[RMDB]
RNA sequence: GGGAACGACUCGAGUAGAGUCGAAAAGAUAUGGACGGUGGACAUGCCUUUACGUCGGAAACGACGUUUAGGCAACAGCCACGUCCUAAGUCAAAGACCAUGCCAACCUUCGGGUUGGCAUGGUCAAGUCUUACAGUAGCUUCGGCUACUGUAAGACAAAAGAAACAACAACAACAAC
Reactivity to 2A3 in 0.01 (KOAc 150mM, MgCl2 10mM, bicine 150mM(pH8.5), 24C), signal-to-noise 1, nucleotides 027 to 126: g010a010u050a080u120g030g010a020c140g150g180u080g020g000a070c080a170u080g020c000c000u000u010u030a000c010g000u010c010g000g030a080a070a050c010g000a000c020g000u000u000u020a000g000g000c000a010a000c010a000g010c000c010a010c000g000u030c000c010u000a170a050g130u010c010a190a010a030g010a000c000c020a000u000g050c020c040a010a010c020c000u020u120c300g060g000g040u010u040g070g020c000a000u000g060g020u000c000a000a000
Reactivity to DMS in 0.01 (KOAc 150mM, MgCl2 10mM, bicine 150mM(pH8.5), 24C), signal-to-noise 2, nucleotides 027 to 126: g000a020u000a300u000g020g000a020c000g020g010u010g010g000a040c070a220u000g000c000c000u000u000u000a000c000g030u000c000g000g000a120a070a230c010g010a020c010g020u000u000u000a000g020g030c000a010a010c300a090g000c000c000a010c000g010u000c000c000u000a000a040g000u010c040a100a110a110g000a010c000c000a020u010g050c010c000a010a000c000c020u000u010c230g030g010g030u000u000g000g000c000a010u010g000g000u000c000a000a010